[RMDB]
RNA sequence: GGGAACGACUCGAGUAGAGUCGAAAAGCUUGCAGCUGAGCCAUAAGGGACUUCACUAAGAAUUUAGGUUGAGAGACGAGGUGCCUCCAUCUGCCUCAUCUGAUCCUUAUGAGGGUCAGGCUAGACCCCACAUGAAAGACUUCGGUCUUUCAUGUGGAAAAGAAACAACAACAACAAC
Reactivity to 2A3 in 0.01 (KOAc 150mM, MgCl2 10mM, bicine 150mM(pH8.5), 24C), signal-to-noise 2, nucleotides 027 to 126: g040c010u050u050g020c030a090g040c040u020g030a010g020c040c010a070u040a130a070g070g010g010a030c020u050u010c050a020c100u080a060a080g070a250a220u170u130u110a120g050g010u030u070g070a040g000a020g000a090c040g010a070g000g060u060g050c050c030u080c070c000a060u050c040u110g020c000c000u020c000a050u040c020u040g030a050u010c000c020u090u120a120u210g240a130g000g000g010u020c000a000g000g000c000u010a010g020a080c010c010
Reactivity to DMS in 0.01 (KOAc 150mM, MgCl2 10mM, bicine 150mM(pH8.5), 24C), signal-to-noise 2, nucleotides 027 to 126: g010c030u020u000g030c070a060g010c040u000g000a110g000c040c040a050u020a090a060g020g000g010a130c060u010u000c030a120c040u000a040a070g020a140a090u000u000u010a040g040g020u000u000g020a160g000a060g000a050c060g010a090g030g000u000g000c080c040u000c050c040a090u000c060u000g000c030c020u000c050a060u000c000u000g000a050u000c000c000u000u000a100u020g020a070g010g000g010u010c010a000g010g000c120u000a070g010a160c070c060

The data come from the RNA Mapping Database (RMDB), library OK2TRN. Chemical mapping of a 177-nucleotide RNA with 2A3 and DMS. For DMS, 2,093 sequencing reads were counted. The reactions ran in a buffer of 150 mM KOAc, 10 mM MgCl2 and 150 mM bicine (pH 8.5), at 24 C. For 2A3 the reverse transcriptase was SuperScript II with manganese. DMS adducts were read by reverse transcription with MarathonRT. For 2A3, 1,163 sequencing reads were counted.